[RMDB]
RNA sequence: GGGAACGACUCGAGUAGAGUCGAAAAUUCUGAUAUGCUCUUGCCUUUGGGCCAAGUAAUGUUCUCCUGUGAGCCACGUCUGCAGUGCUUACAAGGAAAAAGGAAAGAUUCCUCUCCUGUGCACUACCAAUAUACCACGGUUCGCCGUGGUAUAUUGAAAAGAAACAACAACAACAAC
Reactivity to 2A3 in 0.01 (KOAc 150mM, MgCl2 10mM, bicine 150mM(pH8.5), 24C), signal-to-noise 5, nucleotides 027 to 126: u040u000c020u030g040a060u040a070u230g030c020u010c020u050u040g030c000c000u080u060u140g080g030g000c070c030a050a030g040u090a090a130u100g030u060u050c020u010c010c020u040g030u020g050a020g030c050c020a050c050g080u030c060u110g050c110a020g020u010g030c010u020u060a040c020a050a090g000g020a040a010a040a020a020g070g010a060a110a030g110a080u020u070c000c000u000c020u030c010c000u050g030u030g050c030a020c050u080a060c060
Reactivity to DMS in 0.01 (KOAc 150mM, MgCl2 10mM, bicine 150mM(pH8.5), 24C), signal-to-noise 6, nucleotides 027 to 126: u000u000c030u010g010a060u010a060u010g000c060u000c040u000u010g010c010c030u000u010u020g030g020g010c100c130a050a070g010u010a080a060u010g000u000u000c060u000c020c020u000g020u000g000a060g010c070c070a080c100g010u010c100u010g020c080a090g020u000g010c010u000u000a030c060a040a060g010g000a000a030a060a090a080g000g010a030a100a100g000a230u010u000c020c010u000c090u000c010c000u000g010u000g010c030a040c060u000a070c150
The data come from the RNA Mapping Database (RMDB), library OK2TST. An RNA of 177 nucleotides, treated with 2A3 and DMS and read out base by base. For DMS, 9,295 sequencing reads were counted. Reactivities are rounded to 0.1 and cut off at 0 and 3. For DMS the reverse transcriptase was MarathonRT.